[RMDB]
This 177-nucleotide RNA was probed chemically with 2A3 and DMS.
The reactions ran in a buffer of 150 mM KOAc, 10 mM MgCl2 and 150 mM bicine (pH 8.5), at 24 C.
For 2A3, 1,077 sequencing reads were counted.
Source: RMDB library OK2TST, as collected in RNAgym.
Values are in units of 0.01, from 0 to 300, in steps of 10.

RNA sequence: GGGAACGACUCGAGUAGAGUCGAAAACACAAUGUAUUUCGAGUGGUAGGCAGUGUCUCUACGUAGUGGGUUGGGACAAUUUAGUGCACAUUGUGGCUGUUGAUCUUGGCCAGCACGUCGACGAGGAGUCGAGUGAGCAGUUCGCUGCUCACUCGACAAAAGAAACAACAACAACAAC
Reactivity to 2A3 in 0.01 (KOAc 150mM, MgCl2 10mM, bicine 150mM(pH8.5), 24C), signal-to-noise 2, nucleotides 027 to 126: c000a000c050a040a170u210g020u120a110u100u140u070c100g040a040g010u010g160g040u090a080g070g000c040a000g030u030g030u090c020u020c020u050a060c080g060u040a040g000u060g030g070g020u030u040g030g020g000a000c000a000a050u160u140u120a090g030u120g040c030a010c040a150u140u180g030u020g050g050c010u020g020u010u120g080a240u000c000u010u030g000g010c020c000a020g060c010a010c050g090u000c040g000a050c030g040a020g090g000a030
Reactivity to DMS in 0.01 (KOAc 150mM, MgCl2 10mM, bicine 150mM(pH8.5), 24C), signal-to-noise 1, nucleotides 027 to 126: c080a100c120a140a060u010g000u010a130u000u000u000c050g010a110g030u000g010g030u020a070g000g010c070a040g010u000g000u000c020u000c060u000a070c130g010u000a080g010u020g000g000g020u000u000g000g010g010a100c070a040a040u000u000u000a060g040u010g010c070a070c060a100u000u010g040u000g020g010c020u000g000u000u030g000a120u000c020u000u030g030g020c010c090a090g030c020a060c050g010u000c060g020a070c030g010a120g010g030a300